The record gives the reactivity of an RNA of 207 nucleotides to 2A3.
Source: RMDB library RNAMAK, as collected in RNAgym.
Reactivities are given for positions 27 through 156.
For 2A3 the reverse transcriptase was SuperScript II with manganese.
The 2A3 profile rests on 1,328 reads.
Conditions: 150 mM KOAc, 10 mM MgCl2 and 150 mM bicine (pH 8.5), 24 C.

RNA sequence: GGGAACGACUCGAGUAGAGUCGAAAAGGGGUCGAGCUACUUUCGAGGGAGGGACAUGCUCUGAAGCCUCCACGGAGCAACAGCCCUCCUCCCCACCGAAAGGUCUCGACGGAGGCACCCAAAGGAGUUAAUUGCUCUUCGGAGCAAUUAACUCCAACUGGAUCAUAAAGUUCGCUUUAUGAUCCAGAAAAGAAACAACAACAACAAC
Reactivity to 2A3 in 0.01 (KOAc 150mM, MgCl2 10mM, bicine 150mM(pH8.5), 24C), signal-to-noise 1, nucleotides 027 to 156: g050g010g020g000u020c020g020a010g010c070u200a180c030u290u000u000c010g050a090g000g000g010a010g010g020g000a010c060a080u150g010c020u030c000u040g070a130a090g010c000c000u010c000c000a000c010g000g000a000g000c010a050a050c030a110g070c010c010c000u000c000c000u030c010c000c000c010a020c030c010g000a000a000a010g030g030u060c010u010c010g000a000c020g000g010a000g000g000c010a020c000c010c010a020a040a070g000g000a020g010u000u000a000a000u000u000g010c010u000c010u010u090c260g040g010a000g000c000a000a000u000u000a000a000c000u000c000c000a000a000